[RMDB]
Chemical mapping of a 177-nucleotide RNA with 2A3 and DMS.
RNA sequence: GGGAACGACUCGAGUAGAGUCGAAAAUGAAUAAAAAUGAGCAUUUUACAGAGCCGUUUGGUGUGCGAUGAGGAUCGGGAGCGAUGGGUACGUGCGCCACCAAACUGCAAUCCUUUCGACGCACGCGUCGAUCACCCUGGUUCGCCAGGGUGAUCGAAAAAGAAACAACAACAACAAC
Reactivity to 2A3 in 0.01 (KOAc 150mM, MgCl2 10mM, bicine 150mM(pH8.5), 24C), signal-to-noise 7, nucleotides 027 to 126: u050g000a020a040u200a120a070a050a000a020u160g070a050g060c020a020u020u020u010u100a110c110a040g100a030g040c000c010g000u000u010u000g010g000u010g060u150g010c020g010a040u090g080a070g120g030a040u060c020g040g020g050a100g130c030g010a050u090g090g060g050u090a040c070g050u130g080c010g000c000c000a000c000c010a000a000a000c000u000g000c000a010a040u020c000c000u050u080u080c050g030a030c020g010c030a020c030g030c000g050
Reactivity to DMS in 0.01 (KOAc 150mM, MgCl2 10mM, bicine 150mM(pH8.5), 24C), signal-to-noise 3, nucleotides 027 to 126: u010g000a110a060u040a000a050a060a150a170u020g000a110g000c060a030u000u000u000u000a050c250a100g010a160g000c030c070g000u000u000u030g010g010u030g010u100g010c000g000a070u000g040a150g010g010a030u010c040g010g010g020a130g000c100g000a020u000g000g010g000u020a070c130g000u030g000c010g000c020c000a010c000c020a000a040a020c020u010g000c000a140a030u010c020c060u020u000u000c080g010a050c070g000c070a050c070g000c080g020
Description:
The reactions ran in a buffer of 150 mM KOAc, 10 mM MgCl2 and 150 mM bicine (pH 8.5), at 24 C.